[RMDB]
RNA sequence: GGGAACGACUCGAGUAGAGUCGAAAAAGAGUAGCUCUCUAUUUCUUAGUGAAGGCAAACUAAGGGUGCAUUAUAAAAUGUAUGGUAUUCCGCAUAUUGGCUUUGCGAAGUCGAUAUGGACAGGACAGCCAAUAUACCGAUUCGUCGGUAUAUUGGCAAAAGAAACAACAACAACAAC
Reactivity to 2A3 in 0.01 (KOAc 150mM, MgCl2 10mM, bicine 150mM(pH8.5), 24C), signal-to-noise 7, nucleotides 027 to 126: a000g050a010g030u100a030g010c020u010c000u000c000u100a090u050u130u020c020u020u030a030g000u020g100a130a070g180g000c060a090a090a020c020u020a010a030g020g040g020u040g000c010a010u030u080a130u190a180a180a090a030u070g050u070a060u070g090g030u080a110u040u020c000c000g000c000a000u000a000u000u010g000g010c010u000u000u040g090c240g060a010a000g000u010c010g000a000u000a000u000g010g040a040c040a030g010g030a020c010a010
Reactivity to DMS in 0.01 (KOAc 150mM, MgCl2 10mM, bicine 150mM(pH8.5), 24C), signal-to-noise 4, nucleotides 027 to 126: a060g000a060g010u010a110g000c090u030c000u010c020u020a080u030u010u020c000u020u000a010g000u000g000a110a070g010g000c070a080a160a030c040u000a030a070g010g020g030u010g000c030a020u010u030a090u030a070a050a070a030u020g000u000a040u030g010g000u010a140u010u000c000c010g000c000a000u000a000u000u000g010g000c000u000u000u000g030c170g030a010a020g000u000c010g000a000u000a000u000g000g000a100c030a110g010g020a030c300a110

Conditions: 150 mM KOAc, 10 mM MgCl2 and 150 mM bicine (pH 8.5), 24 C. An RNA of 177 nucleotides, treated with 2A3 and DMS and read out base by base. DMS adducts were read by reverse transcription with MarathonRT. Reactivities are rounded to 0.1 and cut off at 0 and 3. For 2A3 the reverse transcriptase was SuperScript II with manganese.